Structure probing data (DMS and 2A3) for a 177-nucleotide construct. Conditions: 150 mM KOAc, 10 mM MgCl2 and 150 mM bicine (pH 8.5), 24 C. For DMS, 1,355 sequencing reads were counted.

[RMDB]
RNA sequence: GGGAACGACUCGAGUAGAGUCGAAAAGUGCUCAAUCGUGUAGCGUUUGAGCGACGCUUUACUGACUUCAAGGAUGAAGGACGCGUCGCCGCCACCCUAGAGGCGGCAUCCCCCGCGUGACGCCCUCUGACGGCGACUUAUUCGUAAGUCGCCGUCAAAAAGAAACAACAACAACAAC
Reactivity to DMS in 0.01 (KOAc 150mM, MgCl2 10mM, bicine 150mM(pH8.5), 24C), signal-to-noise 1, nucleotides 027 to 126: g020u040g000c000u000c000a060a120u000c000g000u000g020u040a200g000c000g010u000u000u000g040a020g010c000g020a010c000g000c000u020u000u040a130c110u020g030a300c000u000u000c090a110a270g000g090a070u000g010a180a080g070g000a040c180g000c020g020u000c090g000c040c000g030c060c000a070c030c100c120u010a090g000a030g030g000c050g000g050c040a020u020c010c000c000c000c000g000c020g000u010g020a040c030g000c040c030c030u000c130
Reactivity to 2A3 in 0.01 (KOAc 150mM, MgCl2 10mM, bicine 150mM(pH8.5), 24C), signal-to-noise 2, nucleotides 027 to 126: g090u070g000c000u010c030a000a000u060c030g020u110g150u240a020g080c020g010u000u020u020g010a030g000c000g020a000c000g020c010u000u080u090a090c070u130g140a000c010u040u020c000a180a170g280g070a210u200g040a010a010g020g000a040c060g010c010g000u000c100g000c000c000g000c000c000a040c000c010c000u070a060g000a040g020g030c000g000g010c000a060u070c010c000c000c000c000g040c030g040u040g000a040c130g000c000c000c030u080c020